[RMDB]
RNA sequence: GGGAACGACUCGAGUAGAGUCGAAAAACUUGUAUAGGCGAUUAAUAAAUCUUCGGUAAAUGCUGUAAGAGGAUUACCCCUUGAGGUUUCAGCACUAGGCUGCUCUAGCGAUUAAUCAAUGCAUUUGUAACGGAAAGACAGUUCGCUGUCUUUCCAACAGAUAUUAAACGUUCGCGUUUAAUAUCUGAAAAGAAACAACAACAACAAC
Reactivity to DMS in 0.01 (KOAc 150mM, MgCl2 10mM, bicine 150mM(pH8.5), 24C), signal-to-noise 2, nucleotides 027 to 156: a060c050u000u040g020u000a160u010a040g030g030c050g010a090u000u000a070a100u010a050a040a100u000c010u000u000c020g040g010u000a060a110a090u000g010c020u010g000u000a070a150g010a070g030g010a180u000u000a060c030c040c000c050u000u000g000a080g020g000u000u000u000c070a070g030c050a050c040u000a090g010g010c040u000g000c080u000c030u000a060g010c050g000a130u000u000a070a020u000c070a060a150u010g000c030a110u000u000u000g010u010a040a110c110g020g010a040a030a030g000a050c000a020g060u000u000c300g010c010u010g010u000c000u000u000u000c000c000a060a090
Reactivity to 2A3 in 0.01 (KOAc 150mM, MgCl2 10mM, bicine 150mM(pH8.5), 24C), signal-to-noise 3, nucleotides 027 to 156: a010c050u080u090g050u040a160u100a150g160g000c040g030a060u090u080a100a090u190a120a090a050u030c050u080u050c050g010g010u070a140a200a050u160g010c020u020g110u200a060a030g030a020g060g010a010u030u120a040c000c010c000c050u000u030g030a070g050g010u070u150u130c010a010g000c000a020c060u060a050g200g000c010u020g020c000u050c020u070a010g020c010g070a030u020u120a040a040u070c060a010a070u100g030c010a030u030u050u150g060u060a100a030c040g010g000a000a000a000g000a000c000a010g020u050u060c210g010c080u000g010u000c010u000u000u000c000c000a000a000